The record gives the reactivity of an RNA of 177 nucleotides to DMS and 2A3. DMS adducts were read by reverse transcription with MarathonRT.
[RMDB]
RNA sequence: GGGAACGACUCGAGUAGAGUCGAAAACUUGCCCAGCUGCAGAGGCCUAGGGACCUCACUUCUUUCCGGCUUUGUCUUUGGUUUUUCCUUUAAGGCUUCUCCUGGGGCUGCCCGUGCAGAAGGGGUCCAUCAGAAGCUUGUUCGCAAGCUUCUGAUGAAAAGAAACAACAACAACAAC
Reactivity to DMS in 0.01 (KOAc 150mM, MgCl2 10mM, bicine 150mM(pH8.5), 24C), signal-to-noise 3, nucleotides 027 to 126: c060u030u040g000c000c000c000a030g060c120u030g010c110a040g020a040g030g010c010c020u010a090g010g020g010a050c090c000u000c080a050c040u010u010c010u000u020u020c000c020g020g010c040u000u000u030g020u020c050u000u030u010g000g020u010u010u010u010u010c000c020u000u030u020a100a030g010g010c030u010u000c010u010c040c040u000g000g000g020g000c080u010g000c040c030c050g010u020g040c140a060g020a100a110g000g000g000g000u010c080
Reactivity to 2A3 in 0.01 (KOAc 150mM, MgCl2 10mM, bicine 150mM(pH8.5), 24C), signal-to-noise 7, nucleotides 027 to 126: c040u060u140g050c010c010c000a020g020c090u110g000c040a010g010a010g030g010c010c020u060a030g040g000g020a030c000c010u050c030a070c040u110u070c030u060u100u060c040c020g060g030c070u080u120u140g050u060c040u060u110u120g090g000u060u050u020u070u120c040c000u100u110u150a090a040g000g000c000u010u000c000u030c000c010u030g010g010g010g000c000u030g020c000c000c010g040u080g020c030a040g040a130a030g020g000g020g020u040c020